Structure probing data (DMS and 2A3) for a 207-nucleotide construct.
[RMDB]
RNA sequence: GGGAACGACUCGAGUAGAGUCGAAAAAUCGGUUGGGACCGCUUCGUGGGCGGAGUUAUCCGCCGGUUGGCCGCGCGCCGCCCCGGCCUGGUGUUUAUGCUCUGGGGCACACACGCCCAGAAUGCCAUCAGGCCGGACCCUCGGGUCCAUUGCGUCCAGUAUACAUGAUCUUCGGAUCAUGUAUACUAAAAGAAACAACAACAACAAC
Reactivity to DMS in 0.01 (KOAc 150mM, MgCl2 10mM, bicine 150mM(pH8.5), 24C), signal-to-noise 2, nucleotides 027 to 156: a070u000c050g020g030u000u010g040g010g000a080c050c000g000c060u000u000c090g030u010g060g040g040c060g020g000a200g030u000u000a110u000c020c010g000c000c010g020g050u000u000g040g020c070c020g040c110g010c100g040c030c020g030c040c110c030c020g030g000c020c000u000g020g030u000g000u000u000u000a090u020g010c060u000c000u010g060g020g030g020c110a140c120a130c160a140c130g000c000c000c000a030g000a040a070u000g030c300c000a030u000c000a030g010g030c010c010g000g010a000c010c030c010u000c150g050g000g000u000c020c040a300u000u000g010c020g000u000c050c060
Reactivity to 2A3 in 0.01 (KOAc 150mM, MgCl2 10mM, bicine 150mM(pH8.5), 24C), signal-to-noise 2, nucleotides 027 to 156: a010u090c050g020g030u090u200g220g000g020a000c060c030g000c040u110u100c140g060u160g040g000g020c030g030g000a060g030u130u160a110u090c020c020g000c000c030g000g030u050u100g040g020c020c010g070c010g000c060g010c050c000g010c000c000c000c000g000g020c020c010u000g000g000u020g020u000u300u120a090u150g040c050u000c000u010g030g020g080g050c050a020c000a020c000a030c050g070c000c000c000a010g030a030a060u150g030c020c000a000u010c000a000g000g010c010c010g000g000a000c010c010c000u050c090g020g010g000u000c010c010a020u060u150g020c030g020u000c030c000

About this RNA
The DMS profile rests on 4,100 reads. Conditions: 150 mM KOAc, 10 mM MgCl2 and 150 mM bicine (pH 8.5), 24 C. The 2A3 profile rests on 1,509 reads. It was measured as part of the RMDB library OK3TST.